[RMDB]
RNA sequence: GGGAACGACUCGAGUAGAGUCGAAAACGCACUUGGCCGCCGAAGCGGUGAUGAGCAUGUCUUUCGAUCAGCUCACCCAGGAUGCGCGCACAAAGAUCAUCGCCGAGCUCGACGACCUGAACAAACAAUCCAUAUCACAGUUCGCUGUGAUAUGGAUAAAAGAAACAACAACAACAAC
Reactivity to DMS in 0.01 (KOAc 150mM, MgCl2 10mM, bicine 150mM(pH8.5), 24C), signal-to-noise 4, nucleotides 027 to 126: c110g030c090a050c140u010u000g020g030c000c010g000c010c030g020a100a090g000c010g000g010u000g010a030u000g010a080g010c050a110u010g020u010c040u000u010u000c090g000a040u010c060a100g010c010u000c050a080c020c030c050a100g000g010a100u000g010c060g020c090g010c110a090c130a060a080a090g000a140u000c030a030u000c010g010c030c010g000a110g020c060u000c000g010a030c050g000a060c010c010u010g010a040a070c180a060a080a150c250a100
Reactivity to 2A3 in 0.01 (KOAc 150mM, MgCl2 10mM, bicine 150mM(pH8.5), 24C), signal-to-noise 4, nucleotides 027 to 126: c030g010c010a050c090u090u070g020g000c000c000g000c020c040g070a120a030g030c020g010g030u040g030a070u010g010a020g030c120a120u140g020u030c040u020u140u090c060g060a110u070c050a040g010c010u020c030a050c000c040c010a000g040g050a070u120g020c050g000c000g020c010a040c040a080a110a010g040a030u050c010a000u020c020g000c020c000g030a030g040c020u010c020g040a040c010g020a030c000c020u060g060a050a010c040a060a090a020c030a050

The record gives the reactivity of an RNA of 177 nucleotides to DMS and 2A3. Conditions: 150 mM KOAc, 10 mM MgCl2 and 150 mM bicine (pH 8.5), 24 C. For 2A3 the reverse transcriptase was SuperScript II with manganese.